[RMDB]
RNA sequence: GGGAACGACUCGAGUAGAGUCGAAAAUGGGACCGACAGUAUAGUCUGGAUGGGAGAAGAAAAUUAUUGCUUAAAUUUUACUAGGCAGUAGUGGCUAUUGGCGACCUUUAAGUAGGUUUAUUUAGCUGGAUCCUACUGGUGAAAUCUAUUUGGCGAACGCUGAAUAAUCAUUCGUGAUUAUUCAGCGAAAAGAAACAACAACAACAAC
Reactivity to 2A3 in 0.01 (KOAc 150mM, MgCl2 10mM, bicine 150mM(pH8.5), 24C), signal-to-noise 3, nucleotides 027 to 156: u040g000g020g030a020c020c020g030a020c010a020g080u120a070u160a080g030u000c040u040g000g060a070u060g020g010g030a030g020a080a050g020a050a090a050a030u140u030a060u050u080g000c000u030u030a050a090a110u100u160u040u100a070c050u000a030g030g070c040a000g020u070a020g030u060g030g010c010u030a020u070u070g040g020c040g020a020c010c000u090u110u020a130a220g300u090a060g000g000u030u040u010a040u040u090u030a020g000c000u000g050g010a030u040c020c020u010a030c000u010g050g000u030g030a020a010a000u040c010u030a080u080u090u050g020g000c030g010a030a000
Reactivity to DMS in 0.01 (KOAc 150mM, MgCl2 10mM, bicine 150mM(pH8.5), 24C), signal-to-noise 2, nucleotides 027 to 156: u010g010g000g010a110c020c030g030a090c050a140g040u010a130u000a080g000u000c040u000g010g030a070u000g000g000g010a120g010a090a100g010a100a070a110a150u000u000a040u000u000g000c010u000u010a030a120a120u000u000u000u000a080c090u000a050g010g020c030a030g020u000a090g030u000g000g000c000u000a070u010u010g010g030c130g020a050c010c020u000u020u000a030a230g010u010a040g040g010u000u000u010a090u020u000u000a050g000c020u000g010g000a130u000c080c010u010a040c030u000g000g000u010g000a030a050a030u000c040u000a190u020u010u000g030g010c050g020a060a200

Structure probing data (2A3 and DMS) for a 207-nucleotide construct. Source: RMDB library OK3TST, as collected in RNAgym. The RNA was probed in 150 mM KOAc, 10 mM MgCl2 and 150 mM bicine (pH 8.5) at 24 C. DMS adducts were read by reverse transcription with MarathonRT. Values cover nucleotides 27 to 156.